[RMDB]
RNA sequence: GGGAACGACUCGAGUAGAGUCGAAAAGCAGCACAGUUUAUCGCAAUAAAUGGCUUGUUCCAUCUGCUACCUUCAGCAUGUAUAGCCCUAGCAAUUAGCUCUUUACCCGUACCACUUUCCCCAGUUAACCUACUCCUCAUUUCGAUGAGGAGUAGGUAAAAGAAACAACAACAACAAC
Reactivity to DMS in 0.01 (KOAc 150mM, MgCl2 10mM, bicine 150mM(pH8.5), 24C), signal-to-noise 4, nucleotides 027 to 126: g010c040a050g000c060a100c090a060g020u010u020u020a050u000c190g000c110a080a090u010a070a080a050u000g000g000c030u020u010g000u000u020c030c020a100u020c050u010g000c050u000a080c070c020u000u000c040a070g030c060a020u020g010u010a050u000a040g010c030c030c020u000a050g040c050a070a070u030u030a060g000c010u010c030u010u010u000a140c080c010c030g000u020a050c060c040a040c060u000u000u000c010c000c010c120a110g000u010u020a040
Reactivity to 2A3 in 0.01 (KOAc 150mM, MgCl2 10mM, bicine 150mM(pH8.5), 24C), signal-to-noise 6, nucleotides 027 to 126: g100c070a010g010c020a020c030a100g030u060u090u100a150u120c090g020c140a060a060u120a110a110a070u130g050g010c000u030u090g030u120u020c020c010a040u010c020u040g010c010u060a110c020c020u060u080c050a030g010c010a070u060g060u110a060u070a100g020c030c010c020u040a020g040c020a060a180u060u040a080g020c010u000c020u040u050u080a060c000c010c010g000u040a060c020c040a030c070u020u030u030c000c010c000c010a030g010u040u110a040